Structure probing data (2A3 and DMS) for a 177-nucleotide construct. DMS (dimethyl sulfate) methylates the pairing face of unpaired adenines and cytosines.
[RMDB]
RNA sequence: GGGAACGACUCGAGUAGAGUCGAAAAGAUAUGGACGACCGUAGGGAGCGUGUGGGUCGGAAACGACCCACCACGCUUUGAUCUACCGGUCGUCCUAAGUCAAAACAACCGUGUUCGCACGGUUGAAGAAUCACUAGAAGUUCGCUUCUAGUGAUUCAAAAGAAACAACAACAACAAC
Reactivity to 2A3 in 0.01 (KOAc 150mM, MgCl2 10mM, bicine 150mM(pH8.5), 24C), signal-to-noise 2, nucleotides 027 to 126: g000a020u040a030u110g000g010a000c000g000a000c000c020g000u000a010g000g020g020a010g010c020g000u000g000u000g020g010g000u010c020g000g000a030a020a000c020g010a000c000c010c010a010c020c020a000c010g010c040u060u050u050g010a000u010c000u010a030c100c120g010g010u000c000g000u000c000c000u000a010a000g000u000c000a000a010a040a110c010a000a010c000c010g020u010g050u070u100c300g040c130a000c010g000g010u010u000g000a010a010
Reactivity to DMS in 0.01 (KOAc 150mM, MgCl2 10mM, bicine 150mM(pH8.5), 24C), signal-to-noise 6, nucleotides 027 to 126: g000a040u000a280u020g000g020a030c000g020a010c000c000g040u000a010g000g000g010a010g040c000g070u000g040u000g000g000g010u000c000g010g000a040a050a140c010g010a030c000c000c000a010c300c120a000c000g010c000u010u000u010g000a030u010c000u000a000c080c170g030g010u000c000g020u000c000c000u000a000a050g010u000c020a100a080a160a200c010a010a010c010c000g020u000g010u000u010c270g030c000a010c000g000g010u000u000g000a070a120
Conditions: 150 mM KOAc, 10 mM MgCl2 and 150 mM bicine (pH 8.5), 24 C.